The record gives the reactivity of an RNA of 177 nucleotides to 2A3 and DMS. Values cover nucleotides 27 to 126. The reactions ran in a buffer of 150 mM KOAc, 10 mM MgCl2 and 150 mM bicine (pH 8.5), at 24 C. Values are in units of 0.01, from 0 to 300, in steps of 10. The DMS profile rests on 1,113 reads.

[RMDB]
RNA sequence: GGGAACGACUCGAGUAGAGUCGAAAAGAUAUGGACGUACUACCCACCGUGACCGACGAAGCGUUUCGGAAACGAAACGCAGAGGCACGAGGUACGUCCUAAGUCAAAACCGUAGUUCGCUACGGAACUUAUGGAGCGUGUUCGCACGCUCCAUAAGAAAAGAAACAACAACAACAAC
Reactivity to 2A3 in 0.01 (KOAc 150mM, MgCl2 10mM, bicine 150mM(pH8.5), 24C), signal-to-noise 2, nucleotides 027 to 126: g130a080u280a140u300g000g000a000c010g000u010a010c010u150a120c000c000c030a040c000c000g020u050g170a300c020c020g160a300c030g060a290a000g000c010g000u000u010u010c000g020g050a060a100a020c020g000a000a000a000c000g020c010a000g020a000g030g030c000a010c000g000a000g000g000u000a000c040g000u010c000c000u010a020a000g140u040c040a010a030a130a220c010c010g010u000a000g030u080u120c250g010c110u010a000c030g030g010a050a030
Reactivity to DMS in 0.01 (KOAc 150mM, MgCl2 10mM, bicine 150mM(pH8.5), 24C), signal-to-noise 2, nucleotides 027 to 126: g020a090u030a210u000g030g030a000c000g000u000a000c010u000a110c040c000c000a300c080c000g000u000g030a210c000c000g000a150c120g000a050a060g000c020g030u000u000u000c000g000g040a080a120a090c010g060a010a000a000c000g020c000a000g020a080g030g000c050a010c000g000a010g010g000u000a000c000g010u000c010c020u000a010a040g030u000c210a070a070a140a100c010c000g000u000a000g000u000u000c260g000c000u000a000c000g000g010a010a040